[RMDB]
RNA sequence: GGGAACGACUCGAGUAGAGUCGAAAAGCUGCCUCUGACGUCCUUCUCCCCCGGAAACGGGGCCGAAGGGUGGUAAUGCGUGUCGCCUGGCGCUCGCACGGGUAUGCGUGGUGGUCGACCCUGGCCGCGAUCACGGAUGAUUCGUCAUCCGUGAUCGAAAAGAAACAACAACAACAAC
Reactivity to DMS in 0.01 (KOAc 150mM, MgCl2 10mM, bicine 150mM(pH8.5), 24C), signal-to-noise 2, nucleotides 027 to 126: g010c020u000g000c010c010u020c160u010g020a100c030g020u000c000c000u000u000c010u000c300c000c000c000c020g020g020a090a060a140c000g030g000g000g030c060c070g000a020a000g000g000g030u000g000g020u020a070a090u010g010c010g040u000g000u010c050g010c020c080u010g010g030c030g000c050u000c040g000c050a090c120g020g000g000u000a020u010g020c020g040u020g010g020u000g010g000u000c030g010a180c040c020c000u000g010g010c020c030g010
Reactivity to 2A3 in 0.01 (KOAc 150mM, MgCl2 10mM, bicine 150mM(pH8.5), 24C), signal-to-noise 2, nucleotides 027 to 126: g000c000u000g010c030c000u090c110u100g100a030c000g010u030c010c020u010u000c010u050c000c000c000c000c000g000g000a000a010a000c020g000g000g000g000c010c000g000a000a000g010g000g000u030g050g050u140a140a100u090g000c010g030u030g110u140c020g050c090c200u160g080g030c020g000c010u040c020g030c010a100c040g030g000g010u060a030u270g030c050g040u030g060g060u050g010g000u030c020g060a120c000c030c010u040g020g030c010c020g000